[RMDB]
RNA sequence: GGGAACGACUCGAGUAGAGUCGAAAACUUCAAUGGUUCGCCAUUGAAGAAACAUGGUAAUCGCUGACACCAUGAAAGAUCGAAAAACGAUCAAAGCGUAAAAAAGUAGUCAGUUCGCUGACUACAAGAAUAUAAGUGUGUUCGCACACUUAUAUUCAAAAGAAACAACAACAACAAC
Reactivity to 2A3 in 0.01 (KOAc 150mM, MgCl2 10mM, bicine 150mM(pH8.5), 24C), signal-to-noise 7, nucleotides 027 to 126: c000u000u000c000a000a000u000g010g020u030u050c170g040c070c000a000u000u010g000a000a000g010a020a040a000c010a010u020g010g010u130a140a080u090c030g000c040u030g040a050c020a010c100c000a000u010g040a120a060a010g000a000u010c010g080a150a060a060a060a160c010g000a010u010c000a010a040a010g010c020g030u100a100a090a020a030a030a010g000u010a000g000u000c000a000g000u020u040c220g010c050u000g000a000c000u000a000c000a000a020
Reactivity to DMS in 0.01 (KOAc 150mM, MgCl2 10mM, bicine 150mM(pH8.5), 24C), signal-to-noise 7, nucleotides 027 to 126: c000u000u000c000a000a000u000g000g010u000u010c230g030c000c000a010u010u000g000a010a010g010a100a080a110c040a030u000g000g010u000a060a240u010c010g000c010u000g010a300c300a050c000c010a010u000g010a100a070a110g000a010u000c000g010a110a080a080a120a220c020g000a010u000c010a070a110a070g010c020g020u010a000a060a070a090a140a100g000u000a010g010u000c000a020g000u000u010c250g020c010u000g010a010c000u000a000c000a040a050